[RMDB]
RNA sequence: GGGAACGACUCGAGUAGAGUCGAAAAGCGCUUUUUUCAAGGCAGGCUUCAUUAGGCGCAGGCUUAGGCGCGCGCGCUUUUGCGCCACACAGCGCAGAGAGGCAGCAGCUUGCCAGCAGAGAGCAAGAGUUCACAUUAGGCGCGCCACAUUAGUUAGACUAGAGUAUUUAUUCGUAAAUACUCUAGUAAAAGAAACAACAACAACAAC
Reactivity to DMS in 0.01 (KOAc 150mM, MgCl2 10mM, bicine 150mM(pH8.5), 24C), signal-to-noise 3, nucleotides 027 to 156: g030c020g020c020u000u000u000u000u000u000c060a060a110g020g030c010a050g030g000c000u030u010c030a140u000u000a110g030g000c010g030c040a090g000g010c030u010u020a100g010g020c010g020c040g030c030g060c190g030c040u000u000u000u000g020c020g060c040c030a130c120a150c120a050g010c000g020c010a110g010a090g010a070g020g010c030a190g020c090a100g010c040u000u000g010c000c020a210g000c080a140g000a110g000a090g000c050a100a120g000a110g010u000u000c020a060c060a150u010u000a110g000g000c010g000c020g020c010c030a090c120a070u000u000a110g000u010u010a200g010
Reactivity to 2A3 in 0.01 (KOAc 150mM, MgCl2 10mM, bicine 150mM(pH8.5), 24C), signal-to-noise 3, nucleotides 027 to 156: g020c020g030c010u160u090u000u050u070u240c080a040a040g020g040c030a030g040g000c000u050u090c160a110u120u240a070g020g000c010g010c030a010g060g000c020u100u100a060g010g000c000g010c000g000c000g020c000g000c030u010u090u240u060g010c000g000c000c000a070c010a000c010a030g050c020g000c030a000g040a000g010a040g110g040c040a050g010c000a000g010c040u030u030g000c010c000a010g000c050a000g040a000g010a010g000c010a040a020g030a020g110u090u130c080a050c040a130u090u140a020g090g000c020g000c000g010c000c000a010c000a020u090u140a070g100u080u220a040g030
Notes
Conditions: 150 mM KOAc, 10 mM MgCl2 and 150 mM bicine (pH 8.5), 24 C. An RNA of 207 nucleotides, treated with DMS and 2A3 and read out base by base. As a SHAPE reagent, 2A3 marks flexible, mostly unpaired nucleotides at the ribose 2'-OH. Reactivities are given for positions 27 through 156. For DMS, 4,882 sequencing reads were counted.